[RMDB]
RNA sequence: GGGAACGACUCGAGUAGAGUCGAAAAGGAGAAAGUUAUACAGUCAUAUACCGCAAAAUGAUAGUUCGGUCAAUGACAGACCACAUACACAAUGGUGGUCCCAUAAGAUUACAAUGGAGCUGAAAAAUCCCUAUGGUCUAGUGACAUCAUAGUCAUAGGAUACUCCUACUUUCGAGUAGGAGUAUCCAAAAGAAACAACAACAACAAC
Reactivity to 2A3 in 0.01 (KOAc 150mM, MgCl2 10mM, bicine 150mM(pH8.5), 24C), signal-to-noise 3, nucleotides 027 to 156: g090g020a050g020a080a100a000g010u050u050a110u030a240c070a040g010u000c010a010u100a010u060a110c000c020g000c060a060a070a070a050u260g150a170u100a120g120u180u210c020g000g020u010c060a040a040u010g000a010c000a020g010a000c020c020a010c000a000u290a040c120a010c010a140a130u160g080g000u000g000g000u050c010c000c000a050u070a050a030g060a150u090u120a080c040a080a000u100g000g030a070g040c030u060g030a010a000a000a000a100u000c010c010c010u050a110u070g050g000u010c020u040a050g050u040g090a040c020a010u140c010a000u110a070g010u050c010a070u110a050
Reactivity to DMS in 0.01 (KOAc 150mM, MgCl2 10mM, bicine 150mM(pH8.5), 24C), signal-to-noise 2, nucleotides 027 to 156: g000g030a180g040a110a080a120g000u010u010a090u010a110c050a000g000u000c010a050u000a120u000a100c040c030g040c170a110a050a130a120u030g010a250u000a090g000u000u000c030g030g000u000c050a080a120u000g000a070c030a070g000a040c000c000a080c020a210u010a130c190a050c130a020a090u000g010g000u000g000g010u000c000c020c070a090u000a060a100g010a160u000u000a030c100a090a100u030g010g010a110g030c020u050g010a030a020a070a090a160u000c010c010c010u000a070u000g000g010u000c010u000a130g030u010g050a060c110a080u000c040a040u000a080g000u000c020a070u020a190